The record gives the reactivity of an RNA of 207 nucleotides to 2A3 and DMS. Conditions: 150 mM KOAc, 10 mM MgCl2 and 150 mM bicine (pH 8.5), 24 C.

RNA sequence: GGGAACGACUCGAGUAGAGUCGAAAAACGAGUCGUACGCGACUCGAAUGGUAUUGUCGGCGUAAAAGAACAAGACGUCACCGGACGCGACCGGGCUAAGAAGCGAAACGUCAUCUACGGAUGACGAAAAACGGACCUGGGUUCGCCCAGGUCCGAAGUGCAUUAUAGGGUUCGCCCUAUAAUGCACAAAAGAAACAACAACAACAAC
Reactivity to 2A3 in 0.01 (KOAc 150mM, MgCl2 10mM, bicine 150mM(pH8.5), 24C), signal-to-noise 3, nucleotides 027 to 156: a010c000g000a000g000u020c020g000u040a040c250g020c020g110a000c000u000c000g000a010a070u090g070g010u140a110u130u200g110u080c070g020g000c000g020u040a020a070a100a130g050a140a030c070a140a050g090a060c010g010u010c020a000c050c000g010g010a000c000g000c000g030a000c020c000g000g000g040c080u150a160a030g070a010a010g060c030g060a080a040a010c000g000u000c000a000u010c010u010a010c160g070g010a000u010g000a020c000g020a030a040a000a000a000c010g000g010a000c000c000u000g020g000g000u030u060c090g050c010c000c000a000g000g000u000c000c000g000a000a010
Reactivity to DMS in 0.01 (KOAc 150mM, MgCl2 10mM, bicine 150mM(pH8.5), 24C), signal-to-noise 1, nucleotides 027 to 156: a180c000g000a030g010u000c000g020u000a170c140g040c020g000a040c000u000c010g000a030a020u010g010g010u000a020u000u010g000u000c000g020g030c030g060u000a110a060a120a110g020a120a140c160a150a090g040a100c040g000u010c020a210c040c010g030g040a100c150g010c140g020a030c000c040g020g000g020c090u110a050a100g030a080a070g020c020g000a080a080a060c030g000u010c020a020u000c000u010a140c300g060g000a010u010g000a040c020g000a010a030a030a080a160c010g000g000a000c030c000u000g020g020g040u000u010c300g050c000c010c000a020g000g000u000c000c010g010a000a020